[RMDB]
RNA sequence: GGGAACGACUCGAGUAGAGUCGAAAACGUAGUUUCGACUACGACGCACCGUAGGAAAUUGCACUGAGGACACACUAUAAUAGUUCGAAAGAGCUAUUACGAAUGUGUCUCCCCACCAGUGGGAUUUCCUAAACGGACUGUUUCCAUUCGUGGAAAACCAUCCGUCAGAUUUCGAUCUGACGGAUGGAAAAGAAACAACAACAACAAC
Reactivity to 2A3 in 0.01 (KOAc 150mM, MgCl2 10mM, bicine 150mM(pH8.5), 24C), signal-to-noise 2, nucleotides 027 to 156: c010g000u010a000g000u060u170u200c300g150a070c020u020a000c010g030a030c020g040c050a050c000c000g010u010a010g010g020a010a000a000u020u160g160c020a000c000u000g010a030g040g010a020c000a000c000a010c000u020a000u000a100a000u000a010g020u000u000c020g060a100a040a060g000a000g060c000u000a000u020u000a010c060g070a280a300u010g000u000g000u000c000u020c000c000c000c010a090c000c000a000g000u000g010g050g010a010u000u000u030c000c000u000a140a060a000c020g010g000a050c100u070g110u030u040u060c030c010a050u130u200c160g080u120g060g060a010a030a170a040

An RNA of 207 nucleotides, treated with 2A3 and read out base by base. The RNA was probed in 150 mM KOAc, 10 mM MgCl2 and 150 mM bicine (pH 8.5) at 24 C. 2A3 adducts were read by reverse transcription with SuperScript II with manganese. Reactivities are given for positions 27 through 156.